The record gives the reactivity of an RNA of 207 nucleotides to 2A3 and DMS. Values are in units of 0.01, from 0 to 300, in steps of 10. For DMS the reverse transcriptase was MarathonRT. The 2A3 profile rests on 6,839 reads.

RNA sequence: GGGAACGACUCGAGUAGAGUCGAAAAGGGGUCUCCGUUUGACGCGAUCGACAUGCUACCACACUGAAGCCUCCACGGUGUGGAUAGCAACAGCGAUCGCCGAGGAGACGGAGGCACCCAAAAUCGUUUGUGAUGAGAUUCGUCUCAUCACAAACGACUUUCUGUAGUUCUUCGGAACUACAGAAAGAAAAGAAACAACAACAACAAC
Reactivity to 2A3 in 0.01 (KOAc 150mM, MgCl2 10mM, bicine 150mM(pH8.5), 24C), signal-to-noise 4, nucleotides 027 to 156: g070g000g000g010u010c000u010c000c000g010u080u080u110g030a010c010g020c000g000a000u000c000g130a160c090a170u220g010c000u010a000c000c000a000c000a010c000u030g050a140a050g090c030c040u070c040c010a080c030g000g010u010g000u010g000g010a030u010a000g000c010a050a080c030a090g020c010g000a000u000c000g000c000c000g030a030g030g020a040g000a000c010g000g000a000g010g000c000a210c000c000c020a050a050a000a070u040c010g000u000u000u000g000u010g000a000u010g000a000g010a010u040u120c230g090u010c070u000c000a000u000c000a000c000a000a000a000c000g000a000
Reactivity to DMS in 0.01 (KOAc 150mM, MgCl2 10mM, bicine 150mM(pH8.5), 24C), signal-to-noise 2, nucleotides 027 to 156: g010g000g040g040u010c000u000c000c000g020u000u000u000g020a130c240g030c010g010a030u000c010g030a080c100a300u010g000c000u000a020c020c020a020c000a000c010u000g000a080a250g000c080c020u000c020c020a270c030g000g000u010g030u000g020g020a070u000a010g000c000a090a090c240a120g020c010g020a020u000c000g010c000c000g000a140g000g000a080g020a010c020g020g030a010g000g000c010a020c010c000c030a060a070a110a110u000c000g050u000u000u010g000u000g000a010u010g020a040g020a070u000u020c300g000u000c000u000c000a000u000c000a010c010a000a000a000c000g040a010